[RMDB]
RNA sequence: GGGAACGACUCGAGUAGAGUCGAAAAUCAUAGCUUCACCAGCGCGACCUGGUCCUCCACGAGCUGGCCCGCGGCGGCGAGCUCAGCUUUUACCUUCCCGCCCACCUCCUCGCGCAGGUACACCGAAGAAGGCUAAAAUAUUCGUAUUUUAGCCUUCAAAAGAAACAACAACAACAAC
Reactivity to 2A3 in 0.01 (KOAc 150mM, MgCl2 10mM, bicine 150mM(pH8.5), 24C), signal-to-noise 2, nucleotides 027 to 126: u090c020a050u080a110g050c030u120u090c050a040c080c030a030g000c060g040c030g070a050c010c010u040g030g010u040c000c030u010c000c000a060c080g000a000g040c000u010g070g000c000c000c000g120c050g130g020c120g040g000c030g030a000g040c010u020c120a010g010c000u040u060u090u070a080c010c010u020u060c000c010c010g030c010c010c000a050c000c030u020c000c000u010c010g010c000g000c020a000g000g040u020a020c040a030c070c040g020a090a050
Reactivity to DMS in 0.01 (KOAc 150mM, MgCl2 10mM, bicine 150mM(pH8.5), 24C), signal-to-noise 6, nucleotides 027 to 126: u010c100a110u000a090g010c070u000u010c080a090c030c040a060g010c040g020c050g000a080c100c040u010g010g010u010c030c020u000c030c050a120c180g000a030g010c010u000g000g000c020c010c020g020c100g020g020c150g010g010c010g000a020g000c010u010c020a040g000c040u000u000u000u000a090c090c060u000u000c020c000c010g020c050c020c030a100c050c020u000c020c020u000c030g020c050g010c050a040g000g000u010a080c150a120c060c040g000a090a130